[RMDB]
RNA sequence: GGGAACGACUCGAGUAGAGUCGAAAAGAUAUGGACACCCGAUGAGGAACUACAUCGCUUGUCGGAAACGACAAACGAUGCCGAGGGUGUCCUAAGUCAAACACAUCUUGCUUCGGCAAGAUGUGAACAUACAACGACUCUUCGGAGUCGUUGUAUGAAAAGAAACAACAACAACAAC
Reactivity to DMS in 0.01 (KOAc 150mM, MgCl2 10mM, bicine 150mM(pH8.5), 24C), signal-to-noise 4, nucleotides 027 to 126: g010a040u000a260u000g000g000a020c000a000c000c000c010g040a160u030g010a220g020g000a120a050c110u010a300c020a000u010c000g010c020u000u000g010u000c000g000g010a040a050a080c000g020a020c000a000a010a010c010g010a000u000g000c020c020g010a170g000g020g010u010g000u000c000c000u000a040a050g010u000c050a090a090a230c010a010c000a010u000c000u000u010g000c000u000u040c230g020g000c010a010a000g000a000u000g010u000g000a030a150
Reactivity to 2A3 in 0.01 (KOAc 150mM, MgCl2 10mM, bicine 150mM(pH8.5), 24C), signal-to-noise 3, nucleotides 027 to 126: g000a020u040a030u060g020g000a010c000a000c030c010c050g110a290u300g130a160g090g050a210a300c200u140a040c180a010u010c000g000c020u000u000g000u000c000g020g000a010a020a010c000g000a000c000a000a010a010c000g010a010u020g190c000c000g010a080g010g000g000u000g010u000c000c000u000a000a000g000u010c020a000a020a040c000a000c000a000u010c000u010u010g000c000u050u050c260g160g000c000a000a000g000a010u000g000u000g010a020a000
Chemical mapping of a 177-nucleotide RNA with DMS and 2A3. It was measured as part of the RMDB library TTRDEL. Values cover nucleotides 27 to 126. DMS adducts were read by reverse transcription with MarathonRT.